Structure probing data (DMS) for a 177-nucleotide construct.
It was measured as part of the RMDB library M2PK90.
DMS adducts were read by reverse transcription with MarathonRT.
[RMDB]
RNA sequence: GGGAACGACUCGAGUAGAGUCGAAAAGUCAUUAAGGCGUGUGCACUCUCUAACACGAAUUACCCAGUUAUUUUCGACUUUACUCGAGUCGUUAUAGCGUGAUAUGAGAGAGUAAUCCGCGACCAAAAUACUUAUAAAUGUUCGCAUUUAUAAGUAUAAAAGAAACAACAACAACAAC
Reactivity to DMS in 0.01 (KOAc 150mM, MgCl2 10mM, bicine 150mM(pH8.5), 24C), signal-to-noise 4, nucleotides 027 to 126: g000u000c080a110u000u010a090a080g000g000c010g030u000g000u010g020c120a050c010u000c010u000c010u000a240a050c010a010c010g000a140a060u000u000a210c150c070c060a130g010u010u000a080u000u000u000u000c000g000a020c010u000u000u000a010c010u000c000g000a000g010u000c000g000u000u000a030u000a080g020c010g000u010g010a020u000a120u010g000a030g000a040g000a030g020u000a140a070u010c030c010g010c000g000a130c020c030a080a070a070